[RMDB]
RNA sequence: GGGAACGACUCGAGUAGAGUCGAAAAGCCUCCUCGGCUCCCGCCCCAUGCGGCCCAAGGCUCAGGGAAGCAAAGUGGCUCAAUAAAAACUUUUGAUAUUAGUUUUUAUGGGUAUUUGCACUCUGGUGAAUGAGUGGUGGUUCGCCACCACUCAUUCAAAAGAAACAACAACAACAAC
Reactivity to 2A3 in 0.01 (KOAc 150mM, MgCl2 10mM, bicine 150mM(pH8.5), 24C), signal-to-noise 2, nucleotides 027 to 126: g030c030c000u020c050c040u070c080g040g010c000u050c020c000c000g030c050c000c000c000a090u250g010c010g040g000c000c070c020a080a060g030g000c040u020c030a000g000g000g020a170a030g000c020a070a020a000g140u200g150g010c000u000c050a210a130u000a000a000a000a000a000c020u060u080u070u150g070a070u040a090u300u110a060g020u000u000u000u040u000a000u000g000g000g030u070a200u020u000u020g040c040a040c060u000c000u010g030g000u010

Record summary:
Structure probing data (2A3) for a 177-nucleotide construct. For 2A3 the reverse transcriptase was SuperScript II with manganese. It was measured as part of the RMDB library RFM100.